[RMDB]
RNA sequence: GGGAACGACUCGAGUAGAGUCGAAAAUGAUCGAGAGAUCUAACGAUGUACGCGAGUCACGUGCACGGACUCGAGCGAAAGCUCGGUCGAAAGACCGCGUACAUCGGUCGGCAAGUGUACAGUCGACGGUAUCCGGAUCAUUCGUGAUCCGGAUACCAAAAGAAACAACAACAACAAC
Reactivity to 2A3 in 0.01 (KOAc 150mM, MgCl2 10mM, bicine 150mM(pH8.5), 24C), signal-to-noise 1, nucleotides 027 to 126: u090g000a010u020c010g010a000g010a000g000a100u010c000u030a070a020c010g010a000u010g000u000a000c000g030c010g010a020g030u010c020a010c280g010u040g060c060a020c050g030g000a000c010u000c050g000a000g000c010g050a150a020a010g020c000u010c000g020g010u000c010g010a010a000a010g010a010c010c000g010c000g000u010a000c000a010u010c000g000g000u030c000g000g010c000a100a190g050u020g020u050a030c010a020g000u000c010g000a030c020
Reactivity to DMS in 0.01 (KOAc 150mM, MgCl2 10mM, bicine 150mM(pH8.5), 24C), signal-to-noise 2, nucleotides 027 to 126: u000g000a000u000c000g000a240g010a290g010a020u000c000u000a080a080c000g010a040u000g000u000a000c000g010c000g030a060g000u000c000a020c260g040u000g000c000a040c070g000g000a020c010u000c000g000a000g000c000g010a120a070a250g030c010u000c000g030g000u000c030g000a110a080a120g000a030c000c000g000c010g020u000a000c030a000u000c000g010g000u010c000g000g000c010a040a130g000u000g010u000a040c030a280g000u010c000g000a150c300